[RMDB]
RNA sequence: GGGAACGACUCGAGUAGAGUCGAAAAAGCUUCGUACUUUGUUAUGAUGCUCACCAUAUCUUAUAACAGACUAAUUGAUAGUUUGCCUAUAGAUUUGAUGUUUAAUUAAGAUAGGCACGCUCAGCUACAAGUAGUUACGGUUCGCCGUAACUACUUGAAAAGAAACAACAACAACAAC
Reactivity to DMS in 0.01 (KOAc 150mM, MgCl2 10mM, bicine 150mM(pH8.5), 24C), signal-to-noise 2, nucleotides 027 to 126: a020g000c010u000u000c020g000u010a010c010u000u000u010g020u010u000a040u000g000a020u010g030c050u000c040a150c000c010a080u000a030u010c000u000u010a050u020a040a090c050a040g010a180c080u000a010a070u000u020g000a130u000a000g010u000u010u000g010c150c010u000a010u000a080g010a050u000u010u000g000a140u000g010u000u000u000a060a030u000u000a030a040g000a030u000a020g000g010c050a030c100g000c100u000c090a080g000c060u010a110
Reactivity to 2A3 in 0.01 (KOAc 150mM, MgCl2 10mM, bicine 150mM(pH8.5), 24C), signal-to-noise 1, nucleotides 027 to 126: a010g010c000u010u000c020g000u010a020c040u200u180u110g010u060u000a020u040g000a000u010g000c010u050c010a050c000c000a000u030a030u040c020u010u090a080u010a140a070c010a020g020a020c010u010a010a030u050u030g010a010u040a050g000u000u010u050g060c010c000u000a010u000a010g070a070u060u030u000g000a000u040g030u030u100u060a140a010u040u000a010a010g010a050u020a010g020g030c000a000c010g040c000u050c030a010g010c030u040a040